About this RNA: The record gives the reactivity of an RNA of 207 nucleotides to 2A3. It was measured as part of the RMDB library M2RFPK.

[RMDB]
RNA sequence: GGGAACGACUCGAGUAGAGUCGAAAACGAGUGCAAUAAAGACGCGGUUGCCGAUCGGUAUGGAUGCCACAGUGACGGCUCAAUCACACAAGUGCCAACGAUAACGAGGCGCUCGCUAUUGCUGCGUAAAAGCGACGAUCGUUCGCGAUCGUCGCAACCAGAAGCCUAGGUUCGCCUAGGCUUCUGGAAAAGAAACAACAACAACAAC
Reactivity to 2A3 in 0.01 (KOAc 150mM, MgCl2 10mM, bicine 150mM(pH8.5), 24C), signal-to-noise 1, nucleotides 027 to 156: c030g000a030g080u080g010c030a020a050u070a240a190a100g090a090c060g000c010g020g010u080u120g050c000c000g060a110u050c020g040g030u160a050u030g020g040a060u110g080c100c010a060c000a000g060u040g050a040c020g070g000c050u050c130a050a060u040c000a000c000a010c010a190a120g010u000g000c000c030a040a000c060g020a050u070a130a010c050g010a050g000g020c020g000c030u030c030g000c010u010a020u050u070g020c100u080g000c030g000u040a000a050a130a070g020c020g000a000c020g010a000u000c000g010u040u070c270g010c020g100a000u000c000g020u000c010g000c000a000a000